Notes: An RNA of 177 nucleotides, treated with DMS and 2A3 and read out base by base. For DMS the reverse transcriptase was MarathonRT. Conditions: 150 mM KOAc, 10 mM MgCl2 and 150 mM bicine (pH 8.5), 24 C. For 2A3 the reverse transcriptase was SuperScript II with manganese.
RNA sequence: GGGAACGACUCGAGUAGAGUCGAAAAUUUAGUCCACUCAUUCACCCAAGCAGGAUUGCCUCUAAAGCCAUUGGAGACAUGGAUGUCUGAAGAUCUGUAUCUUUACGGGAAGGUUCCGAUGUGGAAAGAACGGUAUAAGUUUCGACUUAUACCGUUCAAAAGAAACAACAACAACAAC
Reactivity to DMS in 0.01 (KOAc 150mM, MgCl2 10mM, bicine 150mM(pH8.5), 24C), signal-to-noise 7, nucleotides 027 to 126: u010u030u020a090g010u020c010c010a040c020u010c050a060u010u010c060a100c030c000c020a130a120g010c070a080g000g010a040u010u010g000c040c010u000c040u010a060a080a100g010c060c080a070u020u010g010g000a050g000a050c020a030u000g000g010a080u000g010u010c040u000g000a060a030g010a030u010c070u000g000u030a050u000c020u010u000u000a080c100g010g000g000a100a090g010g020u000u000c030c030g000a090u010g020u000g000g000a050a080a110
Reactivity to 2A3 in 0.01 (KOAc 150mM, MgCl2 10mM, bicine 150mM(pH8.5), 24C), signal-to-noise 9, nucleotides 027 to 126: u120u100u070a050g020u020c010c010a020c010u070c030a100u140u060c010a100c020c000c000a050a040g030c030a030g030g090a090u070u140g030c010c010u050c030u110a100a090a060g040c020c010a040u050u110g080g020a060g020a040c040a040u090g050g020a050u070g060u060c050u070g070a050a020g020a090u010c030u100g070u070a050u030c020u030u090u070a050c050g040g000g050a100a060g090g000u050u000c010c010g050a090u100g020u030g050g000a040a040a040
For DMS, 25,151 sequencing reads were counted. It was measured as part of the RMDB library OK1LIB.